The record gives the reactivity of an RNA of 207 nucleotides to 2A3. The data come from the RNA Mapping Database (RMDB), library OK3TST. The reactions ran in a buffer of 150 mM KOAc, 10 mM MgCl2 and 150 mM bicine (pH 8.5), at 24 C.
RNA sequence: GGGAACGACUCGAGUAGAGUCGAAAACACAAACCACCUACUACAAUAACAACAAUUGCUUAUGCUGAAAAUCAGCCCAGUCUCAUAGCUCUGGAACCUCUCUUUGUCCCCUUCCAGAUAACCACAGGACACUUUAUUUUACACUUUUGUCAUAAUAAUAUACGGUCGGUUUCGACCGACCGUAUAUAAAAGAAACAACAACAACAAC
Reactivity to 2A3 in 0.01 (KOAc 150mM, MgCl2 10mM, bicine 150mM(pH8.5), 24C), signal-to-noise 1, nucleotides 027 to 156: c070a000c030a030a090a010c040c030a040c000c000u050a090c000u050a050c020a200a060u210a170a020c070a030a020c040a030a150u120u020g000c010u010u070a040u040g010c040u040g070a130a120a050a070u160c040a000g010c010c000c020a020g060u020c000u030c070a080u050a030g070c010u000c000u040g010g010a010a010c000c020u060c020u010c000u150u180u190g060u170c020c020c000c030u010u030c000c020a010g020a060u030a080a030c020c000a000c000a030g040g030a020c030a010c160u100u040u040a120u030u200u050u100a070c080a030c050u080u170u060u010g020u000c000a000u170a120a010u300a040
Reactivities are given for positions 27 through 156. For 2A3 the reverse transcriptase was SuperScript II with manganese.